[RMDB]
RNA sequence: GGGAACGACUCGAGUAGAGUCGAAAAGACACCGCGCAGAUCCCAAUGGCGGCUAAUAACGCCAAAAUAAAUGCGCGUAAAUGGCGUAAAAUAUAGACACAAUAUAUGUGAAAGCCGCCAAAGCAAAACGUAUCCUAAUGUUCGCAUUAGGAUACGUAAAAGAAACAACAACAACAAC
Reactivity to DMS in 0.01 (KOAc 150mM, MgCl2 10mM, bicine 150mM(pH8.5), 24C), signal-to-noise 3, nucleotides 027 to 126: g000a130c100a100c130c020g000c000g030c010a130g010a130u000c010c000c010a150a250u000g000g050c000g000g000c010u000a080a060u000a070a010c000g000c000c000a030a040a120a050u000a030a050a110u010g000c000g000c000g000u000a030a170a140u000g010g000c000g000u000a070a040a130a120u000a060u000a050g020a140c100a090c090a030a140u010a060u000a050u000g000u000g000a140a150a060g000c010c000g010c000c000a030a050a110g000c230a040a040a090
Reactivity to 2A3 in 0.01 (KOAc 150mM, MgCl2 10mM, bicine 150mM(pH8.5), 24C), signal-to-noise 2, nucleotides 027 to 126: g020a020c010a000c140c010g010c000g000c010a010g030a120u030c030c000c000a040a000u050g000g000c000g000g000c010u020a090a110u080a150a010c010g000c000c000a110a100a000a000u150a010a100a030u100g010c000g020c000g020u010a020a040a040u040g000g010c010g000u030a090a020a180a000u160a030u050a030g150a030c020a000c010a150a050u120a010u050a060u290g010u020g060a210a040a000g030c030c000g020c010c010a000a010a000g010c020a070a080a010